[RMDB]
RNA sequence: GGGAACGACUCGAGUAGAGUCGAAAAGGGGUCCUGCAGCAGGCUUGGAUUUACAAGGCUUUUGACGGACUGAAGCCUCCACGGUCCGAUAAGCCUUGUUGUCAGCCUGCUUCCCAGGACGGAGGCACCCAAACCUCCUAGAUUCGUCUAGGAGGAAGUUGGUAAUUGGAUUCGUCCAAUUACCAACAAAAGAAACAACAACAACAAC
Reactivity to DMS in 0.01 (KOAc 150mM, MgCl2 10mM, bicine 150mM(pH8.5), 24C), signal-to-noise 1, nucleotides 027 to 156: g000g010g010g000u000c020c020u020g050c100a020g010c000a030g000g000c020u060u010g010g010a090u000u020u000a030c010a040a000g020g010c020u010u010u000u000g020a300c120g040g000a030c030u000g010a010a100g010c020c000u000c030c050a300c080g010g000u000c000c010g000a120u010a030a050g000c010c010u000u000g000u000u000g000u000c040a060g000c010c000u010g010c000u000u000c040c010c030a080g000g000a030c060g010g010a030g010g090c070a160c000c000c000a080a100a130c000c000u000c000c050u000a020g000a100u010u010c300g020u000c000u000a010g020g020a010g010g000a000a050
Reactivity to 2A3 in 0.01 (KOAc 150mM, MgCl2 10mM, bicine 150mM(pH8.5), 24C), signal-to-noise 4, nucleotides 027 to 156: g030g010g000g010u020c030c000u030g030c100a000g000c010a000g010g010c010u160u300g120g010a060u240u280u200a010c010a000a010g010g000c020u060u020u150u260g250a110c050g010g000a000c000u000g060a090a020g060c030c030u070c020c010a060c030g000g010u000c010c010g010a060u040a060a000g000c000c000u000u000g000u000u010g010u000c000a000g000c000c000u000g000c000u000u010c000c000c000a010g000g000a000c020g020g000a050g030g020c040a070c000c010c000a050a070a120c000c000u000c000c000u010a010g010a040u060u050c230g040u020c190u010a000g000g000a000g010g000a000a040
The data come from the RNA Mapping Database (RMDB), library RNAMAK.
An RNA of 207 nucleotides, treated with DMS and 2A3 and read out base by base.
The RNA was probed in 150 mM KOAc, 10 mM MgCl2 and 150 mM bicine (pH 8.5) at 24 C.
Reactivities are given for positions 27 through 156.